[RMDB]
RNA sequence: GGGAACGACUCGAGUAGAGUCGAAAAGAUAUGGAAAGAACUACAUCGCAAACAGCGUUGAAAUCGGAAACGAUGGAGCUGGUAGCGAUGCUUUCCUAAGUCAAACUUCCUGCUUCGGCAGGAAGAAGCCAUAUAGACCGUUCGCGGUCUAUAUGGCAAAAGAAACAACAACAACAAC
Reactivity to DMS in 0.01 (KOAc 150mM, MgCl2 10mM, bicine 150mM(pH8.5), 24C), signal-to-noise 2, nucleotides 027 to 126: g020a020u000a300u010g060g000a010a020a010g000a100a050c150u000a300c020a000u000c000g040c000a030a120a300c030a000g000c000g020u000u030g010a100a110a000u010c000g010g000a110a080a190c010g010a010u000g000g050a090g020c000u000g000g000u000a300g010c000g000a000u000g000c000u000u000u000c000c000u010a060a140g000u000c030a110a110a270c000u000u000c000c000u000g010c000u000u010c150g020g070c000a010g030g000a000a000g020a050a080
Reactivity to 2A3 in 0.01 (KOAc 150mM, MgCl2 10mM, bicine 150mM(pH8.5), 24C), signal-to-noise 3, nucleotides 027 to 126: g020a010u100a030u110g000g020a010a020a000g010a050a010c040u120a010c300a010u000c000g000c020a140a300a160c010a040g020c030g300u300u080g040a070a020a010u000c020g000g060a030a030a070c020g020a010u020g010g000a030g010c010u010g040g000u060a010g010c000g000a000u000g000c000u000u010u010c000c000u020a110a000g030u020c040a030a050a150c010u000u000c010c010u010g010c010u030u070c300g210g000c020a020g050g020a020a000g000a010a010
Chemical mapping of a 177-nucleotide RNA with DMS and 2A3. Conditions: 150 mM KOAc, 10 mM MgCl2 and 150 mM bicine (pH 8.5), 24 C.